[RMDB]
RNA sequence: GGGAACGACUCGAGUAGAGUCGAAAAUCGAACAGUCUGCCCGGUUUCCCGACCGUUGUGGCGCCGGCUACAGCUGCCGCCGUGGCCGCUGCAGUUGAUAUUGAUCCGACGGCGGUGGCCGUGGCGACAUGGGGAUUUACUUCGGUAAAUCCCCAUGAAAAGAAACAACAACAACAAC
Reactivity to DMS in 0.01 (KOAc 150mM, MgCl2 10mM, bicine 150mM(pH8.5), 24C), signal-to-noise 3, nucleotides 027 to 126: u010c070g000a110a140c120a070g020u000c040u000g000c110c040c020g010g000u000u000u000c070c000c010g020a130c120c070g000u010u000g000u010g010g020c160g020c110c060g010g010c020u000a040c040a020g010c030u000g000c060c020g020c050c050g020u010g010g010c040c030g010c020u010g000c020a060g010u000u000g000a080u000a270u010u010g010a070u000c100c010g010a010c010g000g010c010g020g030u000g010g010c000c000g020u000g000g010c000g010a080
Reactivity to 2A3 in 0.01 (KOAc 150mM, MgCl2 10mM, bicine 150mM(pH8.5), 24C), signal-to-noise 1, nucleotides 027 to 126: u120c020g020a050a020c020a050g100u040c040u080g030c040c000c010g030g020u000u050u060c030c000c030g060a080c030c080g070u150u170g090u110g050g000c050g000c040c030g040g000c030u050a020c030a020g030c010u030g080c040c020g000c020c040g060u060g010g040c010c010g040c020u050g000c020a020g020u020u060g050a110u090a080u210u280g170a130u100c050c040g040a010c010g030g030c000g020g000u010g000g000c020c000g010u000g000g000c000g010a000
This 177-nucleotide RNA was probed chemically with DMS and 2A3. Values are in units of 0.01, from 0 to 300, in steps of 10. DMS adducts were read by reverse transcription with MarathonRT. Conditions: 150 mM KOAc, 10 mM MgCl2 and 150 mM bicine (pH 8.5), 24 C.